[RMDB]
RNA sequence: GGGAACGACUCGAGUAGAGUCGAAAAGAUAUGGAGACGAUAAGGCACUCGCAACAGCCUCUCGGAAACGAGAGGACAUGCGAGCCUUUUGACGUCUCCUAAGUCAAAAGGAACCUUCGGGUUCCAAGUCUCAAUCUUACUUCGGUAAGAUUGAGACAAAAGAAACAACAACAACAAC
Reactivity to 2A3 in 0.01 (KOAc 150mM, MgCl2 10mM, bicine 150mM(pH8.5), 24C), signal-to-noise 2, nucleotides 027 to 126: g020a000u060a010u170g010g010a000g000a000c030g030a060u020a050a000g000g000c130a070c230u030c010g000c020a010a130c050a210g130c010c010u000c020u010c010g010g020a070a070a050c010g000a000g000a010g000g000a010c020a050u020g000c010g010a000g000c000c000u090u000u040u000g050a020c030g010u010c000u000c000c010u050a030a000g000u020c030a000a040a020a230g000g000a000a010c010c000u120u190c300g150g020g000u000u010c040c000a000a010
Reactivity to DMS in 0.01 (KOAc 150mM, MgCl2 10mM, bicine 150mM(pH8.5), 24C), signal-to-noise 2, nucleotides 027 to 126: g010a020u010a300u000g020g000a000g020a000c000g040a140u000a000a000g020g000c070a070c140u000c010g010c000a040a020c290a120g020c010c000u000c000u000c000g010g010a070a210a120c020g000a010g000a010g000g030a010c080a090u000g010c010g000a040g000c100c000u050u000u000u010g000a150c150g000u000c000u000c000c000u020a030a130g000u000c050a070a060a140a150g000g000a020a010c000c000u000u020c080g000g000g000u020u000c000c010a040a060